The record gives the reactivity of an RNA of 177 nucleotides to DMS and 2A3.
For DMS the reverse transcriptase was MarathonRT.
It was measured as part of the RMDB library OK1LIB.
2A3 adducts were read by reverse transcription with SuperScript II with manganese.
Values cover nucleotides 27 to 126.
RNA sequence: GGGAACGACUCGAGUAGAGUCGAAAACAAAAACGGAUUGUGUCAGUAAUCACAACAAACAAAAACAAAAGGAUUGUGUCCAUAAUCACAAAAACAAAACAAAAUGGAUUGUGUCCGUAAUCACAAACAUGACCUAGUCGUUCGCGACUAGGUCAUGAAAAGAAACAACAACAACAAC
Reactivity to DMS in 0.01 (KOAc 150mM, MgCl2 10mM, bicine 150mM(pH8.5), 24C), signal-to-noise 1, nucleotides 027 to 126: c010a000a100a110a130a190c170g000g000a180u000u000g000u000g000u000c230a120g000u060a060a030u000c000a050c000a000a120c180a000a000a140c200a060a040a090a060a000c300a020a040a210a300g000g000a000u000u000g000u000g000u000c000c000a050u000a000a000u000c000a080c060a000a000a000a150a020c300a020a140a090a230c230a080a000a030a090u050g000g000a000u000u000g000u000g000u000c080c000g000u000a060a000u000c060a000c080a020a040a180
Reactivity to 2A3 in 0.01 (KOAc 150mM, MgCl2 10mM, bicine 150mM(pH8.5), 24C), signal-to-noise 2, nucleotides 027 to 126: c040a000a110a000a010a030c070g030g110a180u000u000g010u000g000u000c160a090g150u180a040a160u140c030a040c000a140a000c080a000a080a030c160a000a090a000a050a000c060a000a110a010a000g190g080a120u020u000g040u040g000u020c070c020a020u030a000a000u010c000a000c080a300a020a160a000a000c050a010a200a000a010c130a050a070a000a000u180g040g000a050u080u000g000u000g030u000c000c000g010u000a060a000u010c000a000c040a230a050a000